The data come from the RNA Mapping Database (RMDB), library OK3TST. An RNA of 207 nucleotides, treated with 2A3 and DMS and read out base by base. 2A3 adducts were read by reverse transcription with SuperScript II with manganese. Reactivities are rounded to 0.1 and cut off at 0 and 3.
[RMDB]
RNA sequence: GGGAACGACUCGAGUAGAGUCGAAAAGUAAUAGAUAACUGGAUGCAGCGUAGGCGUUAACGCAUAUCCAGUACGAAUGGUACCUGUAAAUAAAAUAUAGCGCCUAGUACAAGUACCAACAGAAGGAUAAGCGAUGGUGAUGUCAAUCACAUUUGCACUUUUAUUUACGGUUCGCCGUAAAUAAAAGAAAAGAAACAACAACAACAAC
Reactivity to 2A3 in 0.01 (KOAc 150mM, MgCl2 10mM, bicine 150mM(pH8.5), 24C), signal-to-noise 4, nucleotides 027 to 156: g030u060a020a120u050a170g120a060u100a150a080c010u030g010g000a020u060g090c190a120g000c300g020u020a050g000g000c000g000u000u040a010a010c000g000c010a010u010a000u140c000c000a000g000u000a000c000g060a100a150u060g010g000u020a020c010c020u020g000u030a040a130a140u090a050a090a100a030u110a010u030a010g000c010g000c000c000u000a030g010u000a010c000a020a000g010u000a020c010c000a000a010c040a030g140a110a040g060g030a060u060a130a070g020c030g050a020u070g040g090u030g010a040u030g090u170c070a080a040u060c000a030c010a080u040u100u210g000c010a030
Reactivity to DMS in 0.01 (KOAc 150mM, MgCl2 10mM, bicine 150mM(pH8.5), 24C), signal-to-noise 2, nucleotides 027 to 156: g040u010a070a130u000a100g000a120u000a070a080c010u000g000g000a050u000g030c150a060g020c020g060u000a080g010g010c000g040u000u000a020a020c010g010c000a080u000a090u000c000c020a050g000u010a040c060g000a110a110u000g010g030u010a040c000c020u000g010u000a040a090a130u010a060a050a080a290u010a020u000a050g000c000g030c000c020u000a140g030u000a020c010a010a000g000u010a000c030c000a060a130c090a090g000a080a110g010g000a090u000a040a120g010c020g040a080u010g020g020u010g020a040u000g000u020c200a070a110u000c020a060c030a130u000u000u010g040c070a250
DMS adducts were read by reverse transcription with MarathonRT.